RNA sequence: GGGAACGACUCGAGUAGAGUCGAAAAUUAAUGAAGCAAAUCUCCAAACGCCAACGAUGAGCGUUUCGCAAUCGCCGCUUAAGGCUUUUGCCGAGGCUGCUUGAGCCUUGUUACCAAAGACAAGCCGAAAACCCAAAUGUCUUCGGACAUUUGGGAAGGUACUUCUGUUCUUCGGAACAGAAGUACCAAAAGAAACAACAACAACAAC
Reactivity to 2A3 in 0.01 (KOAc 150mM, MgCl2 10mM, bicine 150mM(pH8.5), 24C), signal-to-noise 1, nucleotides 027 to 156: u060u040a040a150u100g120a080a000g070c090a110a080a140u010c100u050c080c060a070a010a050c030g030c030c020a220a030c060g190a270u120g020a020g050c000g000u000u030u080c040g030c020a000a000u000c000g000c050c000g110c230u170u160a160a100g000g000c000u030u050u000u010g000c010c010g000a000g000g000c020u020g020c000u020u000g000a000g000c000c000u020u000g040u110u140a010c010c020a000a010a000g190a120c000a000a000g010c000c060g040a090a040a020a020c000c000c000a000a000a000u000g000u010c000u020u020c120g160g000a000c000a000u000u000u000g010g020g000a000a000

This 207-nucleotide RNA was probed chemically with 2A3. Reactivities are given for positions 27 through 156. The data come from the RNA Mapping Database (RMDB), library M2RFPK. The reactions ran in a buffer of 150 mM KOAc, 10 mM MgCl2 and 150 mM bicine (pH 8.5), at 24 C. For 2A3 the reverse transcriptase was SuperScript II with manganese.